[RMDB]
RNA sequence: GGGAACGACUCGAGUAGAGUCGAAAAGUGAAUGACACUGUUACCGUGUCCGGGAAAGUUAAUCCCGUAAAAACUGUAAUCUUUAAAGUGGGUGCGAAAGCUUAAUUUAUUGGUGAUAUUACCGGUACUCCUAUGUAUCUUUCGAGAUACAUAGGAGAAAAGAAACAACAACAACAAC
Reactivity to DMS in 0.01 (KOAc 150mM, MgCl2 10mM, bicine 150mM(pH8.5), 24C), signal-to-noise 6, nucleotides 027 to 126: g020u010g020a070a060u010g010a020c000a010c010u000g000u010u010a090c110c280g000u000g010u000c020c000g000g010g000a070a070a150g010u010u010a100a110u000c000c000c000g000u010a020a020a050a100a040c070u000g010u000a090a040u000c030u000u000u000a030a030a050g000u000g000g000g010u000g010c030g010a100a070a140g000c040u000u000a040a030u000u000u000a030u010u000g020g010u000g010a130u010a070u010u000a050c060c020g020g020u010a120
Reactivity to 2A3 in 0.01 (KOAc 150mM, MgCl2 10mM, bicine 150mM(pH8.5), 24C), signal-to-noise 5, nucleotides 027 to 126: g050u050g220a300a040u020g000a000c000a000c020u040g070u170u150a090c060c160g000u010g000u000c000c020g020g000g020a000a120a060g020u060u140a120a020u040c000c010c000g010u030a010a100a010a010a000c020u020g010u030a060a090u050c030u040u110u060a050a010a020g030u060g020g060g010u060g050c050g100a120a030a070g000c020u050u090a050a060u180u090u100a060u030u040g020g010u020g050a050u080a040u240u140a030c000c010g030g020u020a040